[RMDB]
RNA sequence: GGGAACGACUCGAGUAGAGUCGAAAAUCCGACUCUCAUAGGCUCUCCAACCCAACUCCUACUCAAUACGUCCUCGUCGUACAGAACGGUAACAUGUUUUCCGAACAUCCGCGCUUGGGCAUACGAGAAAGGCGUAGAUUAUUCGUAAUCUACGCAAACCUAUAGUGCAGUUCGCUGCACUAUAGGUAAAAGAAACAACAACAACAAC
Reactivity to 2A3 in 0.01 (KOAc 150mM, MgCl2 10mM, bicine 150mM(pH8.5), 24C), signal-to-noise 6, nucleotides 027 to 156: u050c020c000g030a030c010u010c000u020c050a080u090a170g050g000c020u010c010u000c040c030a080a060c020c000c010a030a060c040u060c020c020u080a080c010u030c050a060a080u080a160c060g030u010c010c000u030c010g150u050c010g000u070a050c040a110g060a100a020c010g010g030u080a060a030c060a140u170g070u070u050u050u020c020c030g010a050a020c010a060u060c020c040g030c000g000c030u030u030g020g000g000c010a030u040a080c050g020a020g050a100a030a010g100g000c000g010u000a000g000a000u000u010a020u010u050c060g020u050a000a000u000c000u000a000c000g000c000a000a040
Reactivity to DMS in 0.01 (KOAc 150mM, MgCl2 10mM, bicine 150mM(pH8.5), 24C), signal-to-noise 2, nucleotides 027 to 156: u000c030c010g010a040c010u000c010u000c040a090u000a110g000g010c010u000c020u000c020c050a050a150c030c040c020a090a120c030u000c030c020u010a050c010u000c060a120a090u020a100c040g010u000c020c010u000c020g010u000c020g010u010a080c040a060g000a070a190c030g020g020u000a020a060c080a120u000g010u000u000u000u000c060c030g000a050a040c010a090u000c010c020g000c040g010c030u010u010g010g020g000c050a050u010a060c030g000a100g000a080a060a070g000g020c000g020u010a010g020a040u000u000a050u040u000c300g030u000a020a020u000c000u000a010c040g010c000a000a020

Chemical mapping of a 207-nucleotide RNA with 2A3 and DMS. For DMS the reverse transcriptase was MarathonRT. 2A3 adducts were read by reverse transcription with SuperScript II with manganese. Values cover nucleotides 27 to 156. The reactions ran in a buffer of 150 mM KOAc, 10 mM MgCl2 and 150 mM bicine (pH 8.5), at 24 C.